RNA sequence: GGGAACGACUCGAGUAGAGUCGAAAAGGAGCCCAAAGGUCGGCUCAGGCGGUACAGAACGCCGCCGUAGAGCGCAAGGGCAAAAGCCGGCCUGACGUGACCCUUCCAAGUACGGGGUCACGACGCGAAAGCGGGGCCUAGCGAACGCUCGUGCCCCCUUAAAGUUUGUGUUCGCACAAACUUUAAGAAAAGAAACAACAACAACAAC
Reactivity to DMS in 0.01 (KOAc 150mM, MgCl2 10mM, bicine 150mM(pH8.5), 24C), signal-to-noise 2, nucleotides 027 to 156: g030g000a100g000c070c000c030a070a040a040g020g090u000c010g000g020c010u000c080a020g000g070c030g050g010u010a300c090a120g000a050a300c080g020c010c000g040c010c010g030u010a050g010a140g030c000g010c070a100a120g000g030g020c030a140a060a020a090g000c000c030g050g000c020c000u010g020a070c010g010u000g000a050c000c000c000u020u000c140c140a140a200g000u000a040c060g010g000g030g000u010c010a020c000g000a060c050g000c000g010a100a070a100g160c020g010g000g010g020c000c030u000a060g010c010g000a080a100c000g000c010u000c020g000u010g020c000c000c060c020
Reactivity to 2A3 in 0.01 (KOAc 150mM, MgCl2 10mM, bicine 150mM(pH8.5), 24C), signal-to-noise 2, nucleotides 027 to 156: g050g000a040g050c010c000c010a050a040a000g000g010u020c010g020g010c010u010c030a020g000g000c010g020g010u110a120c120a250g160a190a020c140g000c000c000g010c000c000g040u060a040g000a040g000c040g000c110a060a070g120g050g000c070a110a110a000a000g020c000c000g000g010c000c000u010g030a010c000g000u000g000a000c000c000c000u070u040c110c060a130a050g080u100a080c100g000g020g000g000u000c000a000c000g010a030c010g000c020g050a150a040a020g000c020g000g000g000g000c000c000u040a020g010c000g070a140a030c120g000c010u020c020g060u150g000c000c000c010c000